[RMDB]
RNA sequence: GGGAACGACUCGAGUAGAGUCGAAAAAGUGGGUCAGGGGUGUGUGGAACUUCCGGUGGAGCGGUGAAAUGUGUUGAUAUCGGAAGGAACGCCGGUGGCGAAAGCGACACGCUGGGGCCUGUCUGACGCUGUAUAUCUUCUUCGGAAGAUAUACAGCAAAAGAAACAACAACAACAAC
Reactivity to 2A3 in 0.01 (KOAc 150mM, MgCl2 10mM, bicine 150mM(pH8.5), 24C), signal-to-noise 1, nucleotides 027 to 126: a020g060u060g020g060g040u100c080a000g080g000g060g000u110g000u010g010u030g070g000a030a030c000u020u000c000c000g020g010u030g000g020a020g000c030g000g000u130g030a020a090a030u170g050u030g080u300u110g040a020u000a010u010c000g010g000a010a010g000g040a020a070c000g000c020c040g140g000u040g020g010c000g020a140a030a020g020c030g070a070c040a010c100g040c000u030g090g010g050g000c000c030u050g060u050c020u030g030a030c050
Reactivity to DMS in 0.01 (KOAc 150mM, MgCl2 10mM, bicine 150mM(pH8.5), 24C), signal-to-noise 1, nucleotides 027 to 126: a060g000u000g030g010g000u010c040a160g000g010g050g000u010g000u000g000u000g000g000a130a080c010u000u000c010c030g000g010u010g000g000a020g000c020g000g010u020g030a070a150a150u010g010u000g000u000u010g000a060u000a010u000c020g000g010a050a020g010g010a070a080c110g020c020c020g030g010u000g000g030c000g000a080a100a080g010c040g000a080c160a060c130g040c040u000g000g000g000g020c030c020u000g000u000c020u000g000a300c240
The record gives the reactivity of an RNA of 177 nucleotides to 2A3 and DMS.
For DMS, 1,043 sequencing reads were counted.
The reactions ran in a buffer of 150 mM KOAc, 10 mM MgCl2 and 150 mM bicine (pH 8.5), at 24 C.
DMS adducts were read by reverse transcription with MarathonRT.
It was measured as part of the RMDB library RFMREP.